[RMDB]
RNA sequence: GGGAACGACUCGAGUAGAGUCGAAAAACGGCGGAUCACCGGGAUCCCUGGAUCCAUGAUGGAUCUCAGAUGAUUCUGGAUCCGAUUCAUCGGUGGAUCCCGCGUCGAGGCGCGGAUCCCAACAGCCGUACCGAUCUUCGUUCGCGAAGAUCGGUACAAAAGAAACAACAACAACAAC
Reactivity to DMS in 0.01 (KOAc 150mM, MgCl2 10mM, bicine 150mM(pH8.5), 24C), signal-to-noise 1, nucleotides 027 to 126: a040c040g000g020c080g040g020a060u000c040a180c130c040g040g000g000a000u000c000c240c080u010g000g000a020u000c000c010a120u040g020a120u030g040g010a010u000c000u040c000a030g000a070u000g030a130u000u000c000u000g000g010a050u000c110c040g000a020u000u000c040a020u000c040g020g010u000g000g000a040u000c060c000c050g020c000g020u000c100g000a130g020g000c020g020c040g010g000a040u000c000c000c070a090a060c120a090g000c170c040
Reactivity to 2A3 in 0.01 (KOAc 150mM, MgCl2 10mM, bicine 150mM(pH8.5), 24C), signal-to-noise 1, nucleotides 027 to 126: a010c020g050g040c020g000g020a020u020c030a060c110c020g000g020g000a000u000c000c020c040u020g000g010a000u000c010c050a050u290g070a130u200g120g000a010u000c150u010c070a010g030a090u170g030a040u070u000c030u000g000g030a030u000c060c010g010a030u100u040c030a050u130c070g110g000u140g040g000a000u090c070c110c010g010c020g030u020c050g060a120g010g080c010g000c000g020g000a000u030c000c000c000a040a030c030a050g070c040c040